Notes
Conditions: 150 mM KOAc, 10 mM MgCl2 and 150 mM bicine (pH 8.5), 24 C. An RNA of 207 nucleotides, treated with DMS and 2A3 and read out base by base. Reactivities are given for positions 27 through 156.
[RMDB]
RNA sequence: GGGAACGACUCGAGUAGAGUCGAAAAUCACUAAGCAUGAUAAGAACCAGAUUUUGCGCUCUCUUUUCGUCAGUGGUCCAAGAAUCCAGUAUGUGUCAUCACAGUUUGGAUCAAGAAGAAACAGGAUGUCAAUAUUACAAGAAGUCGUGGCAGAUGAAAAGUGAAUAUACUUCGGUAUAUUCACUUUAAAAGAAACAACAACAACAAC
Reactivity to DMS in 0.01 (KOAc 150mM, MgCl2 10mM, bicine 150mM(pH8.5), 24C), signal-to-noise 4, nucleotides 027 to 156: u010c030a100c030u000a110a140g040c080a100u000g010a070u000a100a120g000a070a140c020c020a120g010a220u000u000u010u010g020c080g010c040u000c020u000c020u000u000u000u000c060g020u000c050a110g030u000g020g020u000c020c000a090a100g010a080a090u000c030c020a090g030u010a050u000g020u000g020u000c130a150u000c030a070c030a070g010u000u000u000g010g000a050u000c040a080a120g010a100a090g000a070a050a080c070a080g020g000a050u010g000u000c030a040a090u010a090u000u000a100c050a040a110g000a050a110g010u000c040g030u010g010g020c030a090g000a100u000g000a060
Reactivity to 2A3 in 0.01 (KOAc 150mM, MgCl2 10mM, bicine 150mM(pH8.5), 24C), signal-to-noise 6, nucleotides 027 to 156: u050c020a020c070u090a080a030g040c030a060u090g030a060u080a110a040g060a110a100c030c020a060g040a140u080u110u050u110g060c070g000c010u020c000u000c010u050u070u080u050c040g040u020c010a060g030u020g060g020u000c010c020a040a010g040a040a050u040c030c020a010g080u080a100u090g070u010g090u130c080a100u180c020a090c020a060g030u040u090u030g030g010a010u010c020a020a050g080a050a010g010a000a080a030c030a020g060g010a020u050g020u040c010a020a060u060a090u240u140a070c030a050a050g100a080a020g050u050c040g020u030g030g000c030a010g010a100u070g030a040